[RMDB]
RNA sequence: GGGAACGACUCGAGUAGAGUCGAAAAGAAGAGAAUACGGUGUAAGAACAGCCCAACUUACACCGUGCGGCAUAACGGAAACACUGAUGUCGAAAAUUGGGCUGGUCGUGAAUGAACGAAAGAAGAACAUUUAGCGGCUGUUCGCAGCCGCUAAAUGAAAAGAAACAACAACAACAAC
Reactivity to 2A3 in 0.01 (KOAc 150mM, MgCl2 10mM, bicine 150mM(pH8.5), 24C), signal-to-noise 3, nucleotides 027 to 126: g100a010a000g090a020g020a090a000u040a100c000g020g000u000g000u000a000a000g020a110a000c000a010g020c000c000c000a030a090c010u000u000a000c000a000c000c010g010u020g000c000g000g010c070a070u070a290a150c110g060g000a140a120a010c070a010c090u070g020a010u000g000u010c020g010a040a070a000a000u100u030g000g000g000c000u000g000g100u030c010g000u010g110a190a120u130g100a100a000c070g030a030a010a110g200a050a020g090a040a040
Reactivity to DMS in 0.01 (KOAc 150mM, MgCl2 10mM, bicine 150mM(pH8.5), 24C), signal-to-noise 1, nucleotides 027 to 126: g070a020a120g000a060g060a140a120u000a000c010g040g010u020g000u060a000a000g060a090a140c000a040g000c000c000c010a080a030c010u000u000a000c010a010c020c000g060u000g000c120g060g000c000a030u020a210a110c240g000g000a180a110a130c050a170c300u050g000a010u000g020u020c010g000a080a000a040a090u000u000g000g000g000c000u000g000g000u000c000g050u000g050a030a130u020g000a080a010c010g060a040a050a040g000a090a030g000a270a170